An RNA of 207 nucleotides, treated with 2A3 and read out base by base. For 2A3 the reverse transcriptase was SuperScript II with manganese. For 2A3, 769 sequencing reads were counted. Conditions: 150 mM KOAc, 10 mM MgCl2 and 150 mM bicine (pH 8.5), 24 C. It was measured as part of the RMDB library M2RFPK.
RNA sequence: GGGAACGACUCGAGUAGAGUCGAAAAAUCCGUGGAUACCGGGUGCGCACCGCUCCUCCUCCGGCUGUUCUCCUUCACAGCUAUGACCCAUGCGCCGCACAGGCAGUGUCCCGCUUCGUGUGCAAAAAAAACCGCCAGUACUUCGGUACUGGCGGAAGUAAUGAGUAUCCUUCGGGAUACUCAUUACAAAAGAAACAACAACAACAAC
Reactivity to 2A3 in 0.01 (KOAc 150mM, MgCl2 10mM, bicine 150mM(pH8.5), 24C), signal-to-noise 1, nucleotides 027 to 156: a010u060c030c040g030u050g060g010a060u020a170c060c060g020g020g040u050g010c040g040c020a040c080c030g030c070u010c010c000u030c030c020u040c030c020g020g000c020u030g030u030u080c090u040c090c020u130u120c040a020c000a010g000c010u040a070u260g090a090c070c010c020a010u090g020c010g060c030c050g030c010a000c000a010g060g050c000a000g000u020g020u010c010c000c000g000c020u000u040c070g090u040g040u060g040c030a000a000a000a000a000a000a060a200c000c000g000c000c000a000g000u000a000c000u040u080c200g090g000u000a000c000u000g000g030c010g000g000a000a000